[RMDB]
RNA sequence: GGGAACGACUCGAGUAGAGUCGAAAAGUCUAGCGAAGGGAUCCCACCCGGGAGACACGCAAGUCGCGAAUUAGGCCGACCGGCCAAGGUCAAUCGCAGAACUCAACUGCAUGAGUAAGCUAGACGAGACCACUACUGAUUUCGAUCAGUAGUGGUCAAAAGAAACAACAACAACAAC
Reactivity to 2A3 in 0.01 (KOAc 150mM, MgCl2 10mM, bicine 150mM(pH8.5), 24C), signal-to-noise 3, nucleotides 027 to 126: g000u000c000u010a000g010c010g060a250a140g010g020g010a040u010c000c000c000a060c000c020c020g000g050g010a060g000a020c030a030c040g030c040a110a060g120u110c030g040c000g060a110a250u170u070a140g070g000c040c010g020a090c070c080g040g030c060c050a010a010g050g000u020c020a010a030u030c060g040c020a050g050a150a050c040u070c150a070a180c080u070g020c010a090u090g020a020g100u040a030a010g000c000u000a000g000a010c000g000a020
Reactivity to DMS in 0.01 (KOAc 150mM, MgCl2 10mM, bicine 150mM(pH8.5), 24C), signal-to-noise 3, nucleotides 027 to 126: g000u000c000u000a010g060c000g020a090a050g030g020g010a120u000c010c010c010a300c200c020c030g010g010g030a190g000a200c030a080c050g030c130a070a040g010u010c060g020c060g000a060a060u000u020a150g000g010c000c000g010a090c160c190g030g000c020c030a060a080g010g000u000c040a090a100u020c060g010c000a090g000a070a100c130u020c160a100a110c030u000g010c070a110u000g000a060g000u000a050a160g010c000u000a010g000a020c000g010a140

Chemical mapping of a 177-nucleotide RNA with 2A3 and DMS. Conditions: 150 mM KOAc, 10 mM MgCl2 and 150 mM bicine (pH 8.5), 24 C. For DMS, 1,867 sequencing reads were counted. 2A3 is a SHAPE reagent: it acylates the 2'-hydroxyl of flexible nucleotides of all four kinds.